[RMDB]
RNA sequence: GGGAACGACUCGAGUAGAGUCGAAAAAACGUUUAGACCCUUACAAGAUUUGUAAUGAGUAGAAGAACCUACAAACUAAAAAGAUUAAGGGACGGGCUUACUAUUGAUUUUGAAGCAAGCCACGCCCUUAACCUUUUGAGGUUAGACGCUAAACAAAACACGCAUACUAUUUCGAUAGUAUGCGUGUAAAAGAAACAACAACAACAAC
Reactivity to 2A3 in 0.01 (KOAc 150mM, MgCl2 10mM, bicine 150mM(pH8.5), 24C), signal-to-noise 2, nucleotides 027 to 156: a000a010c050g010u040u010u000a090g030a030c020c010c000u010u010a030c040a100a140g040a300u120u120u090g030u030a060a070u110g060a020g050u040a020g050a260a060g010a060a030c010c000u040a060c040a070a090a010c030u100a000a000a040a000a130g000a000u000u000a000a010g010g020g020a020c000g000g000g000c000u030u000a000c020u030a140u140u150g120a160u170u210u120u300g110a060a000g040c040a000a000g000c000c000a060c000g020c000c000c020u000u000a010a000c010c000u040u010u000u030g060a090g000g010u030u000a040g010a040c040g010c090u020a010a030a060c050a000a110a000
Reactivity to DMS in 0.01 (KOAc 150mM, MgCl2 10mM, bicine 150mM(pH8.5), 24C), signal-to-noise 2, nucleotides 027 to 156: a050a000c020g010u000u000u010a080g040a100c000c000c000u010u010a050c070a110a180g000a160u000u010u010g000u000a010a090u010g020a230g030u000a150g020a140a180g000a120a170c060c030u000a100c020a080a060a060c020u000a040a030a010a020a020g010a020u000u000a020a010g010g020g020a050c020g020g010g000c000u000u000a000c000u050a130u000u010g010a220u000u000u000u020g010a130a040g030c020a010a020g010c000c030a030c000g000c000c000c010u000u000a000a000c010c000u000u000u000u000g010a030g020g000u000u000a090g000a030c020g020c020u000a030a050a100c060a110a090a120